[RMDB]
The record gives the reactivity of an RNA of 177 nucleotides to DMS and 2A3. For 2A3, 1,347 sequencing reads were counted. Values cover nucleotides 27 to 126. 2A3 is a SHAPE reagent: it acylates the 2'-hydroxyl of flexible nucleotides of all four kinds. DMS (dimethyl sulfate) methylates the pairing face of unpaired adenines and cytosines.

RNA sequence: GGGAACGACUCGAGUAGAGUCGAAAAUCCUGGCUUACAGGGAAUGCUAUCCAAGGGUUUGCCUGUGGAUGUGGGGCAUCAUAUACAGCUAAUGAUGUCGAAGUCCAAUCAUCUGGCAUGAUUAAGCGCUACUGCUACAGUUCGCUGUAGCAGUAGCAAAAGAAACAACAACAACAAC
Reactivity to DMS in 0.01 (KOAc 150mM, MgCl2 10mM, bicine 150mM(pH8.5), 24C), signal-to-noise 1, nucleotides 027 to 126: u000c010c000u000g010g010c020u000u000a060c020a030g000g020g000a060a030u010g040c000u000a070u000c210c300a050a090g000g000g000u000u000u000g030c030c010u020g000u000g000g000a030u000g040u010g000g020g000g040c020a030u010c010a010u000a130u030a170c190a080g000c080u000a200a050u010g010a020u000g000u000c020g000a090a300g000u000c030c000a000a010u000c090a040u000c030u020g000g030c100a010u010g010a070u000u000a080a060g000c110
Reactivity to 2A3 in 0.01 (KOAc 150mM, MgCl2 10mM, bicine 150mM(pH8.5), 24C), signal-to-noise 2, nucleotides 027 to 126: u040c000c000u040g050g030c000u030u030a000c020a010g050g000g020a040a030u060g110c020u050a090u110c040c020a100a080g100g000g000u040u030u120g200c000c000u040g000u020g040g000a020u040g110u100g060g150g000g010c000a000u000c000a000u070a030u010a090c120a030g120c080u150a120a020u030g010a000u010g020u010c020g030a110a000g010u000c010c000a000a010u050c010a020u000c070u170g120g000c090a020u010g000a020u070u030a030a000g000c030